[RMDB]
RNA sequence: GGGAACGACUCGAGUAGAGUCGAAAAUACACUUUACGUGUGCUGGUUUCAUUACUUUGUCCCAAACCAGGCACGCGUAAUUUAAGGCCAGUUUGGCCAGGUCCGCGUUAUCGAUGGUCACCAAUAAGUAUAGAUCGCGAUUCGUCGCGAUCUAUACAAAAGAAACAACAACAACAAC
Reactivity to DMS in 0.01 (KOAc 150mM, MgCl2 10mM, bicine 150mM(pH8.5), 24C), signal-to-noise 2, nucleotides 027 to 126: u020a100c160a060c020u000u000u000a000c000g020u000g020u000g000c000u010g000g000u000u010u000c130a080u020u000a040c180u000u030u000g000u010c030c030c020a060a020a020c020c000a040g010g000c000a000c000g020c010g010u010a000a010u000u000u000a120a030g010g010c000c010a120g000u020u000u000g020g010c010c020a060g000g010u020c070c000g000c060g010u010u010a050u000c030g020a030u010g020g020u010c070a110c040c040a050a090u000a050a140
Reactivity to 2A3 in 0.01 (KOAc 150mM, MgCl2 10mM, bicine 150mM(pH8.5), 24C), signal-to-noise 1, nucleotides 027 to 126: u080a000c050a010c050u040u030u000a000c000g000u020g000u000g000c000u010g010g010u030u000u050c110a110u110u160a120c100u230u130u260g150u070c030c020c000a010a000a010c000c000a050g140g000c000a000c000g000c010g020u010a000a000u000u000u080a070a050g000g030c000c030a070g040u090u190u080g040g000c010c000a020g000g020u010c000c020g000c010g000u050u080a100u110c050g060a110u130g040g030u010c020a020c020c020a020a160u200a270a010
Structure probing data (DMS and 2A3) for a 177-nucleotide construct. The RNA was probed in 150 mM KOAc, 10 mM MgCl2 and 150 mM bicine (pH 8.5) at 24 C. Values cover nucleotides 27 to 126. It was measured as part of the RMDB library M2PK90. DMS adducts were read by reverse transcription with MarathonRT.